[RMDB]
RNA sequence: GGGAACGACUCGAGUAGAGUCGAAAAAUGAGAGUCGUUAGUCUCUAUAGGGGUUUCUAGCUGAGGAGACAUAACGUAUAGUACCUAGGAACUAAGCAUGUAGAGGUUAGCGGGGAGUUUACUAAGGACGAGAGUUCGACUCUCUCCACCUCCAUAGCUUACGGAAACGGUUCGCCGUUUCCGUAAGAAAAGAAACAACAACAACAAC
Reactivity to 2A3 in 0.01 (KOAc 150mM, MgCl2 10mM, bicine 150mM(pH8.5), 24C), signal-to-noise 1, nucleotides 027 to 156: a020u170g020a080g000a050g200u030c020g000u020u010a010g000u060c000u010c000u020a080u020a040g070g010g000g000u020u010u000c000u010a010g020c060u120g120a110g070g110a140g180a080c060a040u180a060a080c020g110u070a060u060a130g020u040a100c000c010u010a010g000g000a090a000c020u020a040a060g120c160a170u060g000u040a000g000a010g040g010u040u050a020g120c000g000g000g060g000a020g040u170u260u060a100c100u170a080a100g010g000a010c110g000a000g000a000g020u000u180c090g100a110c010u000c000u000c020u010c020c000a040c020c000u000c010c010a060u120a080g000